[RMDB]
RNA sequence: GGGAACGACUCGAGUAGAGUCGAAAAUCGGUGAUCCCGUCUCUCCUGUUCGGUGAACCCUCCCGGGUGUUUCCUCUUCCUAGGUCCGGAGUCGACCUCCAUCUGAUCCGUCCUGGCUCUCUUCGCCGUGCUAUCUAAUCUUCGGAUUAGAUAGCACAAAAGAAACAACAACAACAAC
Reactivity to DMS in 0.01 (KOAc 150mM, MgCl2 10mM, bicine 150mM(pH8.5), 24C), signal-to-noise 1, nucleotides 027 to 126: u000c060g010g010u000g000a090u000c020c010c040g020u010c070u010c030u000c050c010u000g020u000u010c080g010g000u020g000a120a170c060c020c020u000c000c070c070g040g000g010u000g000u010u020u000c010c030u000c040u010u010c020c010u000a090g030g020u010c030c040g010g000a060g020u010c020g000a080c050c000u000c020c010a090u000c060u000g020a090u000c060c030g000u000c010c030u000g010g030c040u010c040u010c040u000u000c100g010c070c080